The record gives the reactivity of an RNA of 177 nucleotides to DMS and 2A3. 2A3 adducts were read by reverse transcription with SuperScript II with manganese. DMS (dimethyl sulfate) methylates the pairing face of unpaired adenines and cytosines. DMS adducts were read by reverse transcription with MarathonRT. It was measured as part of the RMDB library OK1LIB.
[RMDB]
RNA sequence: GGGAACGACUCGAGUAGAGUCGAAAAGACACACUCAGGUUCUUGAGAUAGAACCCAACUCAGCUAUCUCAAGUUCUAGUUGCCGAGUUGGACUUCGAAAUGUCUCCUCGGAAGUGUGUGGAGACAAGAUAGUAUUGUCUUUCGAGACAGUGCUAUCAAAAGAAACAACAACAACAAC
Reactivity to DMS in 0.01 (KOAc 150mM, MgCl2 10mM, bicine 150mM(pH8.5), 24C), signal-to-noise 9, nucleotides 027 to 126: g000a050c010a020c010a010c010u010c050a140g010g000u000u000c000u000u010g000a020g000a010u000a000g000a060a090c120c070c080a070a070c160u010c150a150g000c000u000a010u000c000u000c010a010a000g000u000u000c020u010a050g060u020u010g000c010c020g010a040g010u020u030g000g000a020c040u000u020c190g010a090a100a100u020g000u000c000u010c300c000u000c010g000g000a060a030g010u010g000u010g000u000g000g000a080g000a040c120a080a100
Reactivity to 2A3 in 0.01 (KOAc 150mM, MgCl2 10mM, bicine 150mM(pH8.5), 24C), signal-to-noise 9, nucleotides 027 to 126: g020a000c010a000c000a010c010u040c040a040g080g010u010u000c000u000u000g000a000g000a000u010a000g020a050a040c000c060c010a060a060c050u070c090a040g040c000u000a000u000c000u000c000a000a000g000u010u000c020u030a040g050u070u080g010c000c000g020a010g010u070u120g040g000a000c010u040u020c140g080a040a070a090u120g000u000c000u000c010c000u000c000g050g010a050a040g030u020g010u010g000u010g030g030a050g010a020c040a030a040